Chemical mapping of a 177-nucleotide RNA with DMS and 2A3. DMS adducts were read by reverse transcription with MarathonRT.
RNA sequence: GGGAACGACUCGAGUAGAGUCGAAAAUUGCGUGGUGGGUAGUUUGACUGGGGUGGUCGCCUCCAAAAGAGUAACGGAGGCUUCUAAAGGUUCCCUCAGAACGGUCGGCAAUCGUUCGAAGAGUGUAGAUGUACAACAUCUUCGGAUGUUGUACAUCAAAAGAAACAACAACAACAAC
Reactivity to DMS in 0.01 (KOAc 150mM, MgCl2 10mM, bicine 150mM(pH8.5), 24C), signal-to-noise 5, nucleotides 027 to 126: u030u010g010c100g000u020g000g010u030g000g000g000u000a050g000u020u020u000g030a080c080u020g010g010g000g020u010g000g000u010c090g010c020c000u000c010c000a080a090a120a140g010a200g000u030a100a130c230g020g000a030g000g010c000u000u020c040u010a060a070a140g000g000u010u010c000c000c000u010c100a160g000a020a040c020g030g000u000c100g010g020c160a070a020u010c010g010u000u010c020g000a070a120g000a090g010u030g000u010a100
Reactivity to 2A3 in 0.01 (KOAc 150mM, MgCl2 10mM, bicine 150mM(pH8.5), 24C), signal-to-noise 6, nucleotides 027 to 126: u110u080g000c030g010u040g030g050u100g020g020g040u050a080g060u040u060u170g110a090c070u050g000g010g020g000u040g030g020u030c030g000c020c000u000c000c010a060a080a030a010g180a060g040u060a060a000c050g000g000a010g000g000c000u020u030c020u040a070a040a000g050g000u030u020c020c000c000u020c010a010g000a010a000c010g010g010u050c040g040g010c030a030a040u030c010g020u020u010c010g020a130a050g040a030g050u100g020u050a040